[RMDB]
RNA sequence: GGGAACGACUCGAGUAGAGUCGAAAAUACCGCAGGCCUGCGGUGCGGCGGUGUGGAGACCUGCCGUAAGCCGUGUUGUUUUGACAACCGGGAGAAAGCGUAUGCGGAGGCAGCGCUUUCAGGGUCUAAAAGUAUGGGAUCUUCGGAUCCCAUACAACCUAGAUCAGACGUUCGCGUCUGAUCUAGGAAAAGAAACAACAACAACAAC
Reactivity to 2A3 in 0.01 (KOAc 150mM, MgCl2 10mM, bicine 150mM(pH8.5), 24C), signal-to-noise 2, nucleotides 027 to 156: u090a000c010c010g000c010a000g040g000c010c000u010g000c020g030g000u000g000c000g020g000c010g000g020u160g090u220g110g060a070g030a070c000c070u090g010c000c020g000u000a020a010g040c010c020g110u150g020u190u010g010u030u120u120u300g140a000c000a000a000c000c040g000g000g000a020g000a010a000a000g000c000g010u030a260u210g010c050g010g100a030g270g000c000a000g010c000g010c020u000u000u000c010a000g020g000g000u010c010u020a040a080a050a030g000u000a010u000g000g010g000a010u020c010u030u020c070g100g000a000u020c000c000c000a000u000a000c000a000a010